[RMDB]
RNA sequence: GGGAACGACUCGAGUAGAGUCGAAAAACGCUGAUGACUACGAGCCGGACACUGAGCUGGAAGUUUACACGCACAUCUAUCGUCAGGACGACGAGUACCUGCGUUAUGAGGAAGUGGAAGGAGUAGAUCAAUAUCUUCCGUUCGCGGAAGAUAUUGAAAAAGAAACAACAACAACAAC
Reactivity to 2A3 in 0.01 (KOAc 150mM, MgCl2 10mM, bicine 150mM(pH8.5), 24C), signal-to-noise 9, nucleotides 027 to 126: a010c060g010c100u090g030a120u100g030a080c020u040a030c080g040a040g070c000c010g010g020a020c020a010c080u100g010a030g050c020u040g040g050a070a040g040u070u090u110a060c070a000c030g060c000a020c010a100u030c060u120a050u030c020g130u120c030a030g070g080a060c070g010a010c050g010a030g030u050a270c000c000u020g000c000g010u010u050a110u230g050a020g040g030a110a040g020u020g010g020a040a040g030g030a030g020u060a020g020a040
Reactivity to DMS in 0.01 (KOAc 150mM, MgCl2 10mM, bicine 150mM(pH8.5), 24C), signal-to-noise 7, nucleotides 027 to 126: a090c140g020c060u010g010a080u020g010a090c050u010a040c050g000a100g010c010c050g010g000a300c090a050c050u010g010a130g010c030u010g000g000a070a060g000u020u010u020a080c130a060c040g000c050a100c070a140u010c090u020a040u000c010g010u010c020a070g010g010a150c080g000a070c080g010a130g010u020a090c060c090u000g000c000g010u000u010a050u020g010a060g000g010a120a180g030u000g000g000a150a090g000g000a080g010u010a040g000a220
Conditions: 150 mM KOAc, 10 mM MgCl2 and 150 mM bicine (pH 8.5), 24 C.
An RNA of 177 nucleotides, treated with 2A3 and DMS and read out base by base.
The 2A3 profile rests on 9,328 reads.
For DMS, 15,048 sequencing reads were counted.
Values cover nucleotides 27 to 126.
The data come from the RNA Mapping Database (RMDB), library OK1LIB.